Chemical mapping of a 177-nucleotide RNA with DMS and 2A3. Conditions: 150 mM KOAc, 10 mM MgCl2 and 150 mM bicine (pH 8.5), 24 C. It was measured as part of the RMDB libraries RFM100 and RFMREP. For DMS the reverse transcriptase was MarathonRT.

RNA sequence: GGGAACGACUCGAGUAGAGUCGAAAAUGUGCAUUCCAUCCAGAAGGAUUUAGCAAGUCACUGGAAGCGAGUCUUGCAUGGGUCUUAGCGAUGAGGCUUGUGAAGCGUAGACAGCGGGUACAAAAGCUCACUACGUGUCGUUCGCGACACGUAGUGAAAAAGAAACAACAACAACAAC
Reactivity to DMS in 0.01 (KOAc 150mM, MgCl2 10mM, bicine 150mM(pH8.5), 24C), signal-to-noise 2, nucleotides 027 to 126: u040g000u000g040c010a100u000u000c020c030a250u010c000c000a080g020a120a120g000g010a010u000u000u000a220g030c240a020a040g000u000c000a080c030u010g000g020a050a070g050c010g010a020g010u000c000u000u000g030c080a050u000g040g000g010u000c010u000u000a030g010c240g060a210u000g010a060g000g000c000u030u020g030u010g010a050a110g010c130g010u000a050g000a030c010a300g010c030g010g020g000u000a040c020a040a060a120a180g000c140
Reactivity to 2A3 in 0.01 (KOAc 150mM, MgCl2 10mM, bicine 150mM(pH8.5), 24C), signal-to-noise 2, nucleotides 027 to 126: u160g000u040g020c020a050u060u000c020c000a000u000c000c000a010g040a050a090g140g030a030u030u060u030a040g030c060a010a030g010u000c020a020c050u010g030g030a030a030g010c010g010a020g000u000c000u000u040g020c000a000u050g020g030g010u000c020u000u090a030g040c020g080a080u110g020a040g010g000c000u020u000g000u010g040a090a030g180c040g040u000a000g000a010c010a010g010c060g060g000g000u030a020c030a030a140a020a010g050c010